Structure probing data (DMS and 2A3) for a 207-nucleotide construct. Source: RMDB library OK3TST, as collected in RNAgym. Reactivities are rounded to 0.1 and cut off at 0 and 3. For 2A3, 793 sequencing reads were counted.
RNA sequence: GGGAACGACUCGAGUAGAGUCGAAAAAAGAUUUAACUCUUCACAUCAUGUGUACCUGGGGUGUCUGGGAAAUAACUAUUAAUUCCAAAGAGCAGGAUGAAUAUUUGCAUAAUUGCUAGUCUGUGCCAUAAAACAGUUGUCACUCACCAGUGGCCCAUCCUUGUAUACUGUUCGCAGUAUACAAGGAAAAAGAAACAACAACAACAAC
Reactivity to DMS in 0.01 (KOAc 150mM, MgCl2 10mM, bicine 150mM(pH8.5), 24C), signal-to-noise 2, nucleotides 027 to 156: a050a050g000a120u010u010u010a070a090c070u000c020u000u000c020a080c030a100u000c070a090u010g030u020g010u010a070c060c020u000g040g000g020g020u000g010u000c000u020g010g050g020a070a040a040u000a060a070c070u000a110u000u000a070a120u000u020c080c020a060a090a130g010a100g040c040a110g020g010a050u000g000a090a100u000a090u000u000u010g010c020a070u010a080a080u000u010g040c020u000a100g020u000c010u000g030u000g030c040c040a080u010a060a100a120a090c060a070g010u000u000g020u000c020a080c020u010c040a090c050c010a070g030u000g010g010c000c020c020a110
Reactivity to 2A3 in 0.01 (KOAc 150mM, MgCl2 10mM, bicine 150mM(pH8.5), 24C), signal-to-noise 2, nucleotides 027 to 156: a000a000g140a030u220u200u140a170a130c040u020c020u150u030c060a040c010a150u180c020a080u170g050u010g010u150a040c000c040u110g000g010g000g010u010g030u010c010u020g000g000g000a100a080a070u060a020a020c020u000a020u220u040a120a120u150u070c090c090a080a040a030g030a040g010c020a020g020g050a010u060g060a080a010u160a240u160u090u180g000c000a010u050a150a160u270u200g050c020u010a040g030u000c040u070g190u110g030c000c010a100u150a040a080a050a040c040a040g010u070u040g010u040c010a000c010u020c000a110c030c010a010g010u080g090g030c020c040c000a020